RNA sequence: GGGAACGACUCGAGUAGAGUCGAAAAGUGAAGCUACCACGUGUUGGAUUAUGGCUGAACGCCUCUAAGUCAGAAUCCGUGCUAGAUACAAUGACCUUGUCCCGCGCAUUUACCGUUGUGUCGAAAUGAAUAGGGAUGUGUUCGCACAUCCCUAUUCAAAAGAAACAACAACAACAAC
Reactivity to DMS in 0.01 (KOAc 150mM, MgCl2 10mM, bicine 150mM(pH8.5), 24C), signal-to-noise 1, nucleotides 027 to 126: g010u000g000a160a120g010c010u000a050c070c000a020c120g040u000g010u010u000g000g010a060u010u030a080u000g000g000c010u010g000a180a120c190g000c010c010u010c040u010a120a060g000u000c000a000g000a030a090u020c060c080g000u000g020c120u010a030g010a020u010a090c100a050a050u010g010a100c120c000u000u010g030u010c030c020c010g060c080g010c150a070u010u010u030a060c210c090g010u010u000g000u010g000u010c030g010a090a010a060u010
About this RNA
The record gives the reactivity of an RNA of 177 nucleotides to DMS. Conditions: 150 mM KOAc, 10 mM MgCl2 and 150 mM bicine (pH 8.5), 24 C. For DMS, 728 sequencing reads were counted.